[RMDB]
RNA sequence: GGGAACGACUCGAGUAGAGUCGAAAAUCUAAUGUCUUCGGACAUUAGAAAAGGCGGAGGCUCGCACCUAGCGACCGGCGCAACGACGCACGUGACUGCGAAAAAUCACCGAGUUCGCUCGGUGAAAGAAUAUUAUGUGGUUCGCCACAUAAUAUUCAAAAGAAACAACAACAACAAC
Reactivity to DMS in 0.01 (KOAc 150mM, MgCl2 10mM, bicine 150mM(pH8.5), 24C), signal-to-noise 5, nucleotides 027 to 126: u010c000u000a000a000u000g000u000c000u000u010c210g040g000a010c000a000u000u000a010g000a010a050a110a100g020g010c020g010g010a180g000g000c200u000c030g020c020a100c110c120u000a110g000c010g000a070c020c010g000g000c010g000c030a140a070c090g010a080c030g010c010a040c050g010u010g010a090c180u000g000c020g000a030a080a060a100a150u000c000a000c000c000g000a010g010u000u010c230g020c000u000c000g000g000u000g000a010a030a050
Reactivity to 2A3 in 0.01 (KOAc 150mM, MgCl2 10mM, bicine 150mM(pH8.5), 24C), signal-to-noise 5, nucleotides 027 to 126: u000c000u000a000a020u010g010u000c010u020u040c170g120g000a000c000a000u000u000a000g010a010a130a000a020g110g000c020g020g160a030g030g020c100u020c030g010c020a070c060c150u040a040g020c020g020a030c020c010g050g150c020g000c010a030a050c040g100a020c010g030c020a020c040g060u100g130a070c080u040g010c000g060a120a000a000a010a060u020c000a000c000c000g000a000g010u030u050c170g040c070u000c000g010g000u000g000a000a000a000
Chemical mapping of a 177-nucleotide RNA with DMS and 2A3. Reactivities are given for positions 27 through 126. It was measured as part of the RMDB library M2PK50.